[RMDB]
RNA sequence: GGGAACGACUCGAGUAGAGUCGAAAAUUCCAUUUGAGUAUCCUGAAAACGGGCUUUUCAGCAUGGAACGUACAUAUUAAAUAGUAGGAGUGCAUAGUGGCCCGUAUAGCAGGCAUUAACAUUCCUGUGUGAGUGUACUGUUCGCAGUACACUCACAAAAAGAAACAACAACAACAAC
Reactivity to DMS in 0.01 (KOAc 150mM, MgCl2 10mM, bicine 150mM(pH8.5), 24C), signal-to-noise 2, nucleotides 027 to 126: u020u000c020c010a150u030u010u050g000a170g080u010a110u010c010c010u000g000a100a070a110a010c040g000g000g000c000u000u000u040u040c180a220g000c000a000u000g010g010a160a120c050g020u010a010c020a120u010a210u110u010a160a060a250u020a050g010u000a030g030g020a240g010u000g000c020a030u060a110g000u070g050g000c000c020c000g000u040a020u020a110g000c020a000g000g000c250a050u000u020a030a060c100a080u010u000c030c000u000g000
Reactivity to 2A3 in 0.01 (KOAc 150mM, MgCl2 10mM, bicine 150mM(pH8.5), 24C), signal-to-noise 2, nucleotides 027 to 126: u080u020c050c000a090u230u020u050g030a030g010u120a050u030c000c000u000g010a000a000a050a080c010g000g010g000c000u010u070u060u110c010a050g010c020a010u040g000g100a170a000c000g030u040a000c010a090u110a050u080u300a100a200a110u180a040g040u020a000g070g170a030g050u010g030c010a030u080a140g020u000g030g010c000c000c010g000u000a000u000a000g000c000a010g000g000c010a020u090u130a020a000c000a010u010u000c020c000u050g010
This 177-nucleotide RNA was probed chemically with DMS and 2A3. For 2A3 the reverse transcriptase was SuperScript II with manganese. The data come from the RNA Mapping Database (RMDB), library RFM100. The reactions ran in a buffer of 150 mM KOAc, 10 mM MgCl2 and 150 mM bicine (pH 8.5), at 24 C.